[RMDB]
RNA sequence: GGGAACGACUCGAGUAGAGUCGAAAAGAAACGAUGGUUGGCUAAACCUGGUCGGACAUCAGGAGGUUAGUGCAGUCGCAUAAGCCACCUUGACAACAAAAAGGAAAAAGAAAGAAGAAAAAGAAAAACGUAUUUAUCAGUUCGCUGAUAAAUACGUAAAAGAAACAACAACAACAAC
Reactivity to DMS in 0.01 (KOAc 150mM, MgCl2 10mM, bicine 150mM(pH8.5), 24C), signal-to-noise 5, nucleotides 027 to 126: g010a080a080a120c080g000a050u020g000g020u000u010g010g020c030u010a040a080a100c020c020u000g020g020u010c130g000g000a180c250a150u000c010a020g000g020a070g010g000u000u010a160g010u000g000c000a140g020u070c150g010c020a030u000a060a150g020c020c020a070c000c000u000u030g020a070c070a100a180c120a030a060a050a030a020g010g000a060a040a040a070a060g000a050a040a040g000a080a040g010a040a050a030a080a100g000a040a080a020a110
Reactivity to 2A3 in 0.01 (KOAc 150mM, MgCl2 10mM, bicine 150mM(pH8.5), 24C), signal-to-noise 6, nucleotides 027 to 126: g030a000a030a000c030g020a020u060g020g040u100u050g050g000c020u050a070a020a070c010c010u000g010g040u040c090g060g060a030c010a050u030c000a020g030g040a040g040g090u110u080a050g020u040g060c020a040g140u140c070g020c020a030u030a090a040g000c000c010a020c020c000u000u040g050a040c050a140a000c010a010a120a030a010a070g090g040a070a090a030a020a010g160a090a070a020g060a030a030g060a040a120a020a010a000g130a040a030a010a000
Background: The record gives the reactivity of an RNA of 177 nucleotides to DMS and 2A3. DMS adducts were read by reverse transcription with MarathonRT. The RNA was probed in 150 mM KOAc, 10 mM MgCl2 and 150 mM bicine (pH 8.5) at 24 C. Source: RMDB library OK1LIB, as collected in RNAgym.